[RMDB]
RNA sequence: GGGAACGACUCGAGUAGAGUCGAAAAGCACGGUGCCGUGCCGGUAGGACGGUGACCCUGUGACGCUGCCGAGCGAUACCCGGUGGGAUGCACUACCUGACCGUUUGCGGGCCGAAGGCAUCACGAACAAGCUGGUGACCUCCGACGGGCGGGUAUGCCUUUGGUUCAUUUUCGAAUGAACCAAAGGAAAAGAAACAACAACAACAAC
Reactivity to 2A3 in 0.01 (KOAc 150mM, MgCl2 10mM, bicine 150mM(pH8.5), 24C), signal-to-noise 3, nucleotides 027 to 156: g060c010a000c030g010g020u040g010c000c010g080u150g300c010c040g100g180u220a130g080g040a020c020g000g040u080g080a080c010c010c000u070g080u090g030a010c030g000c010u010g000c000c010g020a010g010c000g020a040u140a180c000c010c000g010g000u070g010g070g010a070u140g000c060a030c090u030a000c010c000u000g030a020c000c010g010u030u100u240g100c040g030g000g000c070c120g090a030a000g000g000c010a010u020c020a000c110g100a280a040c120a170a040g040c100u010g010g000u080g050a300c000c000u040c020c000g020a010c000g010g000g010c020g020g000g030u020a030u040g020
Reactivity to DMS in 0.01 (KOAc 150mM, MgCl2 10mM, bicine 150mM(pH8.5), 24C), signal-to-noise 1, nucleotides 027 to 156: g020c030a030c080g030g000u010g040c030c040g010u000g040c000c010g000g050u020a140g030g020a070c020g000g020u000g020a070c040c000c000u010g040u000g010a110c010g010c030u010g030c050c060g000a050g000c030g020a230u000a300c000c000c020g040g080u000g000g010g000a110u010g000c030a180c060u010a020c010c000u000g000a020c020c010g020u000u000u020g070c060g060g040g010c010c000g020a150a270g160g030c010a130u000c040a300c100g050a170a170c190a100a120g000c030u000g020g010u000g000a070c020c000u000c070c010g040a020c020g000g000g000c050g000g000g030u010a030u010g020
Structure probing data (2A3 and DMS) for a 207-nucleotide construct. DMS (dimethyl sulfate) methylates the pairing face of unpaired adenines and cytosines. The data come from the RNA Mapping Database (RMDB), library OK3TST. The reactions ran in a buffer of 150 mM KOAc, 10 mM MgCl2 and 150 mM bicine (pH 8.5), at 24 C.